[RMDB]
RNA sequence: GGGAACGACUCGAGUAGAGUCGAAAAGGGAGGUCUUCGGACCUCCCAAAAGCGUACUACGAGCUUGGAUUUACCUCGAACGUUGAAACUUCCCAAAUAGGAAGUGGAGUUCAGGUUGUCAGCUCGUAUCGCAAAGCCACACUCUUCGGAGUGUGGCCCAACGGUUUUCCUUCGGGAAAACCGUUGGAAAAGAAACAACAACAACAAC
Reactivity to 2A3 in 0.01 (KOAc 150mM, MgCl2 10mM, bicine 150mM(pH8.5), 24C), signal-to-noise 1, nucleotides 027 to 156: g010g000g000a060g000g000u030c020u060u070c190g070g040a000c000c000u000c000c000c000a000a000a000a000g000c000g010u080a010c000u010a010c010g060a000g020c040u130u090g110g000a060u070u140u300a070c020c020u060c210g000a010a010c020g140u260u090g020a020a020a020c000u000u020c020c000c000a120a290a270u150a070g000g020a000a000g040u000g000g100a000g000u000u000c000a030g010g010u000u020g000u000c000a000g000c000u000c020g000u000a000u090c000g010c000a080a080a080g010c030c020a000c000a020c000u110c000u070u110c300g110g000a000g000u020g000u000g010g000c000